An RNA of 177 nucleotides, treated with 2A3 and DMS and read out base by base. The data come from the RNA Mapping Database (RMDB), library OK2TST. For DMS, 1,762 sequencing reads were counted. For DMS the reverse transcriptase was MarathonRT. The reactions ran in a buffer of 150 mM KOAc, 10 mM MgCl2 and 150 mM bicine (pH 8.5), at 24 C. For 2A3 the reverse transcriptase was SuperScript II with manganese. Reactivities are given for positions 27 through 126. Reactivities are rounded to 0.1 and cut off at 0 and 3.

RNA sequence: GGGAACGACUCGAGUAGAGUCGAAAACAAGUGCUGCUCCUGGCCCCAAGUCAGCUCUGGAUGGUCUCAACACAGGAUGCCUCUUGCAGAUCUUGAAAUUAUUGAUCUCCCUAGAUAGCUGAGGAGGCGAGAGCGACUUAUUCGUAAGUCGCUCUCGAAAAGAAACAACAACAACAAC
Reactivity to 2A3 in 0.01 (KOAc 150mM, MgCl2 10mM, bicine 150mM(pH8.5), 24C), signal-to-noise 1, nucleotides 027 to 126: c020a060a070g040u010g040c030u040g010c000u030c010c000u010g070g010c000c020c030c000a020a070g060u060c020a010g000c050u050c020u020g030g020a100u050g060g040u020c040u030c040a040a060c070a000c000a060g040g040a030u090g040c020c040u050c020u030u120g020c030a030g010a100u060c000u040u020g100a080a130a110u250u140a100u070u110g060a040u100c000u080c030c000c000u020a080g040a090u090a040g050c030u010g040a010g010g020a010g000g000
Reactivity to DMS in 0.01 (KOAc 150mM, MgCl2 10mM, bicine 150mM(pH8.5), 24C), signal-to-noise 2, nucleotides 027 to 126: c070a050a140g010u000g020c040u000g020c010u010c010c000u020g010g000c040c010c040c050a050a160g000u010c060a050g000c030u010c030u010g000g010a130u000g020g010u000c020u000c050a060a110c120a070c100a040g010g000a130u000g000c030c060u000c050u010u020g010c040a070g000a040u000c020u000u000g010a100a120a110u000u010a090u010u000g030a070u010c020u000c040c020c010u000a050g000a160u000a070g020c020u000g020a070g000g010a100g010g020